[RMDB]
RNA sequence: GGGAACGACUCGAGUAGAGUCGAAAAAGUAUGUUCAUAUGCUGUUGAGAAUGAUUUAAUAGGGAAGCAAAAAAUAUGUGAUGCAAAACAGGGAAAAAUUGCUAGAAUAAUAUCAUUGAGUAAGUGCACAGCAAAUGGAUCUAGUGUACAAAUGGAACACCUCGUCAUUAUUCGUAAUGACGAGGUGAAAAGAAACAACAACAACAAC
Reactivity to DMS in 0.01 (KOAc 150mM, MgCl2 10mM, bicine 150mM(pH8.5), 24C), signal-to-noise 1, nucleotides 027 to 156: a120g030u010a020u030g010u010u010c030a100u000a160u010g000c010u020g000u000u030g010a130g020a080a070u010g000a090u000u000u000a150a090u000a160g000g000g030a190a040g040c010a000a030a040a130a030a120u000a060u000g040u000g000a100u010g020c110a070a040a120a110c040a170g020g020g000a010a020a010a040a090u000u010g000c030u000a130g000a080a120u020a100a110u010a070u000c000a060u000u000g000a180g010u000a040a080g010u000g020c040a020c090a090g000c070a020a000a050u000g010g000a090u030c080u000a060g010u010g000u000a050c040a070a080a060u020g010g010a090a100
Reactivity to 2A3 in 0.01 (KOAc 150mM, MgCl2 10mM, bicine 150mM(pH8.5), 24C), signal-to-noise 2, nucleotides 027 to 156: a000g100u090a040u130g000u000u080c020a040u100a070u140g030c030u010g070u080u090g100a070g020a090a120u110g000a070u110u040u220a120a090u130a030g040g010g050a090a010g000c000a010a000a000a060a000a000u100a010u090g060u050g020a020u060g000c010a000a030a060a080c080a070g000g000g100a030a010a000a090a050u020u030g000c010u020a040g040a160a090u100a110a020u040a040u110c020a030u010u100g030a020g070u020a150a020g020u030g080c020a020c010a000g010c000a080a040a110u050g010g000a000u020c060u050a030g040u010g030u010a010c030a080a010a000u110g000g000a030a030
Chemical mapping of a 207-nucleotide RNA with DMS and 2A3. The RNA was probed in 150 mM KOAc, 10 mM MgCl2 and 150 mM bicine (pH 8.5) at 24 C. For 2A3 the reverse transcriptase was SuperScript II with manganese.